[RMDB]
RNA sequence: GGGAACGACUCGAGUAGAGUCGAAAAGGAAAGCACAUGAAGCACGCGAAGCACGGCAAGCACAAGAAGCACUACAAGCAGUACAAGCAGCGCAAGCAGUAGAAGCAGCCGAAGCAGUACAAAAAAAUCAUUAAGUAAAGUUCGCUUUACUUAAUGAAAAAGAAACAACAACAACAAC
Reactivity to 2A3 in 0.01 (KOAc 150mM, MgCl2 10mM, bicine 150mM(pH8.5), 24C), signal-to-noise 3, nucleotides 027 to 126: g050g010a110a030a020g030c020a010c010a080u110g040a030a020g030c040a000c070g050c030g060a040a000g020c020a020c050g010g000c030a030a020g030c010a020c010a050a050g050a050a010g000c010a010c050u090a020c030a050a050g020c030a010g040u050a030c010a120a020g020c020a010g020c030g000c050a050a040g000c010a000g010u100a020g030a080a010g000c020a000g010c010c020g010a040a000g010c010a000g020u080a030c090a000a080a020a020a010a000a040
Reactivity to DMS in 0.01 (KOAc 150mM, MgCl2 10mM, bicine 150mM(pH8.5), 24C), signal-to-noise 6, nucleotides 027 to 126: g010g000a080a060a100g010c020a040c050a070u000g000a070a090g010c030a030c080g020c060g010a080a070g020c040a050c100g010g020c040a070a060g010c040a050c080a060a080g010a080a090g000c020a070c050u010a050c130a050a080g010c020a050g020u000a050c090a050a070g010c050a050g010c070g010c080a060a090g010c040a080g020u000a050g000a090a080g000c040a050g010c020c030g010a050a060g000c040a040g010u000a050c070a010a000a030a060a030a050a100